Chemical mapping of a 207-nucleotide RNA with 2A3. 2A3 adducts were read by reverse transcription with SuperScript II with manganese. Conditions: 150 mM KOAc, 10 mM MgCl2 and 150 mM bicine (pH 8.5), 24 C.
RNA sequence: GGGAACGACUCGAGUAGAGUCGAAAAGACCAAUAACAGAAUGCACCACAGCGUAAAAUCAUCUGAUCGGGUGAGUUGGUCGCACCGCCAUUUGACGAACGAACGCCAAGCCUAAGCCGUCUUUGUGAACACGAGCUAGUCUUCGGACUAGCUCGAAGAUAAUCUUCGGCUUCGGCCGAAGAUUAUCAAAAGAAACAACAACAACAAC
Reactivity to 2A3 in 0.01 (KOAc 150mM, MgCl2 10mM, bicine 150mM(pH8.5), 24C), signal-to-noise 1, nucleotides 027 to 156: g000a020c010c010a000a040u100a080a010c040a020g070a200a060u150g050c000a010c010c010a020c000a040g050c040g060u050a030a060a070a150u060c050a020u000c030u100g040a060u100c090g000g030g000u000g040a020g030u040u070g040g000u010c010g000c000a010c060c000g050c030c010a070u070u070u190g060a070c070g070a100a000c010g000a030a030c040g030c080c020a080a000g000c020c020u020a010a010g020c020c040g040u040c030u000u050u050g070u010g080a090a150c020a000c070g000a000g000c000u000a000g000u060c000u010u070c260g070g000a000c000u000a000g000c000u000c000g000a000a000